Structure probing data (2A3 and DMS) for a 207-nucleotide construct. The reactions ran in a buffer of 150 mM KOAc, 10 mM MgCl2 and 150 mM bicine (pH 8.5), at 24 C. Reactivities are given for positions 27 through 156. DMS adducts were read by reverse transcription with MarathonRT. Source: RMDB library OK3TST, as collected in RNAgym. For 2A3, 3,186 sequencing reads were counted.
[RMDB]
RNA sequence: GGGAACGACUCGAGUAGAGUCGAAAAGAGGACAUCCCAAGCGUCUCCUGGAUAAGGCCCGACGGCAUCUUCCAGCUAGGAGGGGGAUCCCGUUCAUCUUUCAGCCCAACGCAAGCAUUCCUCACUCUCCAGCAGGCAUCCUCAACACCGCGCACAGGGCAAGAAUUAGAUUCGUCUAAUUCUUGCCAAAAGAAACAACAACAACAAC
Reactivity to 2A3 in 0.01 (KOAc 150mM, MgCl2 10mM, bicine 150mM(pH8.5), 24C), signal-to-noise 1, nucleotides 027 to 156: g050a030g010g010a010c010a050u050c000c000c040a000a020g050c030g080u020c010u020c040c020u010g020g010a030u030a140a070g040g000c050c040c030g140a070c060g010g000c010a040u040c030u050u010c020c020a030g010c100u100a050g040g060a030g010g020g000g020g010a020u040c000c000c020g010u030u050c030a180u030c030u010u080u090c060a040g010c000c000c000a050a020c050g000c050a040a070g000c010a050u110u000c010c000u000c030a060c020u020c010u020c010c010a010g010c000a010g040g040c000a050u050c020c000u030c000a010a060c000a030c060c020g000c020g000c060a020c060a090g010
Reactivity to DMS in 0.01 (KOAc 150mM, MgCl2 10mM, bicine 150mM(pH8.5), 24C), signal-to-noise 1, nucleotides 027 to 156: g010a120g010g000a090c050a190u020c010c020c030a150a120g030c050g010u000c000u010c020c040u030g000g000a110u010a100a080g020g010c040c020c050g000a110c190g000g020c070a070u000c020u010u000c020c010a080g000c040u000a080g010g000a130g040g000g010g020g010a080u010c030c000c040g000u000u000c050a080u000c040u000u000u000c030a060g020c030c020c020a070a100c060g000c000a080a060g040c030a150u000u000c030c010u010c040a090c050u000c000u010c020c040a070g020c000a050g030g020c020a080u000c020c040u010c000a110a100c050a040c020c010g010c040g000c050a120c070a180g020